[RMDB]
The record gives the reactivity of an RNA of 177 nucleotides to 2A3 and DMS. The RNA was probed in 150 mM KOAc, 10 mM MgCl2 and 150 mM bicine (pH 8.5) at 24 C. DMS adducts were read by reverse transcription with MarathonRT. 2A3 adducts were read by reverse transcription with SuperScript II with manganese. The DMS profile rests on 6,409 reads. In probing experiments dimethyl sulfate is read out at A N1 and C N3, which are open when not base-paired. It was measured as part of the RMDB library M2PK90. For 2A3, 20,639 sequencing reads were counted.
RNA sequence: GGGAACGACUCGAGUAGAGUCGAAAAUCAAAGAGCGUCGCACACACGCAGACUAAGUCUGCUGCAUGCAGUGCCUAAACCGCAGGCUCUGUGUGCGAGAUAUCGUUCAAAAUGCAUGCAGAAAAAACUCUUAGCAUAUGUUCGCAUAUGCUAAGAGAAAAGAAACAACAACAACAAC
Reactivity to 2A3 in 0.01 (KOAc 150mM, MgCl2 10mM, bicine 150mM(pH8.5), 24C), signal-to-noise 7, nucleotides 027 to 126: u160c050a090a100a010g040a010g010c030g050u010c000g010c000a000c000a000c010a000c020g000c010a000g000a000c060u240a180a070g030u000c000u000g010c020u020g000c010a000u010g000c000a000g020u000g040c000c000u100a140a100a060c030c030g080c100a010g000g010c000u010c090u060g000u000g000u000g000c030g010a000g000a000u190a040u190c030g010u060u050c040a030a020a030a000u020g000c010a000u010g000c010a010g100a040a080a000a010a010a020
Reactivity to DMS in 0.01 (KOAc 150mM, MgCl2 10mM, bicine 150mM(pH8.5), 24C), signal-to-noise 5, nucleotides 027 to 126: u010c180a100a130a160g000a040g020c020g010u000c030g010c010a010c020a020c020a110c300g020c000a010g000a020c010u000a120a130g010u000c010u000g000c010u000g010c000a010u000g010c010a010g020u010g010c010c010u000a030a070a240c050c060g030c190a030g010g010c010u000c090u000g010u000g000u000g000c000g000a020g000a110u010a050u010c030g020u000u000c040a030a020a060a060u000g000c020a000u000g010c000a080g010a020a050a050a060a050a120